Source: RMDB library RFM100, as collected in RNAgym.
The record gives the reactivity of an RNA of 177 nucleotides to 2A3 and DMS.
The RNA was probed in 150 mM KOAc, 10 mM MgCl2 and 150 mM bicine (pH 8.5) at 24 C.
The 2A3 profile rests on 1,080 reads.
2A3 adducts were read by reverse transcription with SuperScript II with manganese.
[RMDB]
RNA sequence: GGGAACGACUCGAGUAGAGUCGAAAAGAAAGAAAGAAAGAACUCCUGUCUGAUGAUGAGCCCAUUGCCCUGAGCUCUUGUGAUGCUGGCUUCAAAGUAAACGCUCUGAAGUGAAGGAGCAGGGCAAUAGCUUGACAUGGUUCGCCAUGUCAAGCUAAAAAGAAACAACAACAACAAC
Reactivity to 2A3 in 0.01 (KOAc 150mM, MgCl2 10mM, bicine 150mM(pH8.5), 24C), signal-to-noise 2, nucleotides 027 to 126: g140a030a060a030g070a000a090a000g110a000a060a060g050a010a010c060u020c060c000u060g050u090c070u030g080a110u020g050a050u050g030a020g000c000c000c000a000u020u020g000c010c000c000u110g020a080g030c000u000c020u000u110g070u040g100a200u160g010c140u070g040g010c000u000u000c010a040a000a000g030u020a180a230a080c060g010c040u000c000u000g000a000a010g000u000g050a050a010g000g030a010g000c010a000g000g020g000c000a010a000
Reactivity to DMS in 0.01 (KOAc 150mM, MgCl2 10mM, bicine 150mM(pH8.5), 24C), signal-to-noise 1, nucleotides 027 to 126: g030a110a120a070g000a110a060a040g000a040a100a130g000a070a150c050u000c030c080u000g000u050c000u000g030a080u000g020a070u010g010a100g060c000c000c000a060u000u000g030c000c000c010u000g000a100g040c010u000c000u000u000g010u020g000a110u000g050c070u000g000g000c010u000u010c000a000a030a020g010u000a060a150a060c250g030c000u000c010u020g000a000a000g000u020g040a090a100g020g000a060g000c000a060g010g000g020c020a000a040